[RMDB]
Overview: The data come from the RNA Mapping Database (RMDB), library TTRDES. Structure probing data (2A3 and DMS) for a 177-nucleotide construct. The reactions ran in a buffer of 150 mM KOAc, 10 mM MgCl2 and 150 mM bicine (pH 8.5), at 24 C. The DMS profile rests on 3,317 reads.
RNA sequence: GGGAACGACUCGAGUAGAGUCGAAAAGAUAUGGAUUACUCUACUGGGAGACGACCCUUCGGAAACGAAGGCGUCGUCGACGAUCAGUAGAGGUAAUCCUAAGUCAAAAGAGGUCUUCGGACCUCAACUAUGCUUUAACCUUCGGGUUAAAGCAUAGAAAAGAAACAACAACAACAAC
Reactivity to 2A3 in 0.01 (KOAc 150mM, MgCl2 10mM, bicine 150mM(pH8.5), 24C), signal-to-noise 1, nucleotides 027 to 126: g040a000u100a040u210g000g000a000u000u010a030c000u000c010u020a010c000u010g000g020g000a050g010a000c000g020a000c020c000c000u000u010c020g000g010a050a020a040c010g000a010a000g000g050c200g020u010c020g000u010c000g000a020c000g010a010u030c010a010g000u000a000g000a020g020g000u000a000a000u000c000c010u000a080a020g060u000c040a010a000a100a170g010a010g020g000u010c000u070u120c300g170g000a020c000c000u000c000a000a000
Reactivity to DMS in 0.01 (KOAc 150mM, MgCl2 10mM, bicine 150mM(pH8.5), 24C), signal-to-noise 3, nucleotides 027 to 126: g000a060u000a300u010g010g000a030u000u000a050c000u000c000u000a010c000u000g010g020g010a040g020a020c000g000a000c010c010c000u010u010c000g000g000a120a070a180c000g030a020a000g010g030c270g000u000c000g040u000c010g000a030c260g010a060u010c010a010g020u000a000g010a010g000g000u000a010a000u000c000c000u000a040a130g000u010c060a090a090a150a150g000a040g010g010u000c010u000u000c180g000g000a000c000c000u000c000a010a090